Conditions: 150 mM KOAc, 10 mM MgCl2 and 150 mM bicine (pH 8.5), 24 C. This 177-nucleotide RNA was probed chemically with DMS and 2A3. DMS adducts were read by reverse transcription with MarathonRT. Reactivities are given for positions 27 through 126. The 2A3 profile rests on 660 reads. For DMS, 1,297 sequencing reads were counted. For 2A3 the reverse transcriptase was SuperScript II with manganese.
RNA sequence: GGGAACGACUCGAGUAGAGUCGAAAAGGAAAGUCCCCGGACACUGGGUAGAGAGUACCUGGGGUGUAACCCCCCACACCUGAUCUAAACCACCUGGGGUUAUACACCUUGGACCAAGCUAAGAUGCUGCGGAGCAGUAGUUCGCUACUGCUCCGCAAAAAGAAACAACAACAACAAC
Reactivity to DMS in 0.01 (KOAc 150mM, MgCl2 10mM, bicine 150mM(pH8.5), 24C), signal-to-noise 1, nucleotides 027 to 126: g000g000a040a140a160g000u000c030c000c020c060g000g010a140c060a170c060u000g000g000g000u000a040g000a080g010a150g000u020a020c080c160u000g000g010g000g020u000g020u000a080a100c010c030c000c000c000c030a080c110a030c100c070u000g000a060u000c050u030a070a070a250c050c000a070c050c000u000g030g010g000g010u000u000a100u040a010c060a090c000c000u030u000g000g000a090c060c020a210a000g000c020u000a060a040g000a050u010g020c060
Reactivity to 2A3 in 0.01 (KOAc 150mM, MgCl2 10mM, bicine 150mM(pH8.5), 24C), signal-to-noise 1, nucleotides 027 to 126: g050g020a060a070a050g090u100c020c010c030c000g030g000a000c030a010c130u190g030g000g000u040a030g020a020g000a030g020u020a080c030c040u080g000g000g000g020u000g020u020a020a040c000c000c000c000c000c000a060c000a020c020c000u100g020a110u030c010u110a070a130a130c020c000a020c010c080u020g000g000g000g000u000u000a050u020a010c140a160c010c000u000u010g030g000a000c000c000a030a000g060c030u130a020a080g060a170u130g090c030